Chemical mapping of a 177-nucleotide RNA with DMS and 2A3. Source: RMDB library OK2TRN, as collected in RNAgym. For DMS, 1,012 sequencing reads were counted. DMS adducts were read by reverse transcription with MarathonRT. The RNA was probed in 150 mM KOAc, 10 mM MgCl2 and 150 mM bicine (pH 8.5) at 24 C. For 2A3 the reverse transcriptase was SuperScript II with manganese.
RNA sequence: GGGAACGACUCGAGUAGAGUCGAAAAUAGCACACCCACCUCCCGGACUUGGCUGGAAACUUGCACAUUUCGGAUGGCAGGUUUGGGAACCGCUGCCUUUCAGGAAAGGUGCUGACGUGGGCCACUGCGUCAUCAUGUCCUUCGGGACAUGAUGACGAAAAGAAACAACAACAACAAC
Reactivity to DMS in 0.01 (KOAc 150mM, MgCl2 10mM, bicine 150mM(pH8.5), 24C), signal-to-noise 1, nucleotides 027 to 126: u000a120g000c090a060c130a100c000c000c000a150c030c080u000c030c020c000g030g000a100c150u000u000g030g000c020u000g000g040a010a060a030c090u000u000g000c030a070c040a150u010u000u000c050g010g010a070u000g000g010c000a040g000g010u000u000u040g010g000g010a120a280c080c120g000c050u020g030c050c010u000u000u010c060a090g000g020a000a030a060g010g010u000g010c030u010g010a050c170g020u020g000g000g020c020c040a080c130u010g000
Reactivity to 2A3 in 0.01 (KOAc 150mM, MgCl2 10mM, bicine 150mM(pH8.5), 24C), signal-to-noise 1, nucleotides 027 to 126: u010a000g070c030a010c000a060c050c020c010a050c000c010u000c020c030c040g080g000a070c050u060u050g070g060c070u030g010g080a100a010a080c060u110u140g000c080a010c000a200u060u070u070c120g060g040a010u040g050g000c000a000g040g070u070u120u250g040g020g040a000a010c040c040g250c120u010g030c020c000u080u080u100c080a040g090g030a060a000a000g120g030u000g010c000u000g000a030c060g010u070g000g020g000c010c020a080c030u110g010